[RMDB]
RNA sequence: GGGAACGACUCGAGUAGAGUCGAAAAUACCGCAGGCCUGCGGUGCGGCAGUGUGGAGACCUGCCGUAAGCCGUGUUGUUUUGACAACCGGGAGCAAGCGUAUGCGGAGGCAGCGCUUUCAGGGUCUAAAAGUAUGGGAUCUUCGGAUCCCAUACAACCUCCUUCUCUUGUUCGCAAGAGAAGGAGGAAAAGAAACAACAACAACAAC
Reactivity to 2A3 in 0.01 (KOAc 150mM, MgCl2 10mM, bicine 150mM(pH8.5), 24C), signal-to-noise 2, nucleotides 027 to 156: u090a010c000c010g000c000a010g020g040c010c050u020g000c000g000g000u000g000c000g040g000c000a010g010u020g000u110g300g040a030g040a050c000c000u020g000c000c000g010u010a030a000g060c040c020g090u090g000u120u010g000u000u120u080u260g100a020c020a020a020c010c000g000g030g000a000g000c010a050a000g000c000g010u070a240u140g010c040g010g050a120g200g030c010a000g000c010g010c020u020u060u110c040a030g010g000g030u000c010u060a070a060a040a030g000u000a000u000g000g000g000a000u000c010u000u020c140g080g000a000u000c020c000c000a000u000a000c000a010a000
Structure probing data (2A3) for a 207-nucleotide construct. Values are in units of 0.01, from 0 to 300, in steps of 10. The RNA was probed in 150 mM KOAc, 10 mM MgCl2 and 150 mM bicine (pH 8.5) at 24 C.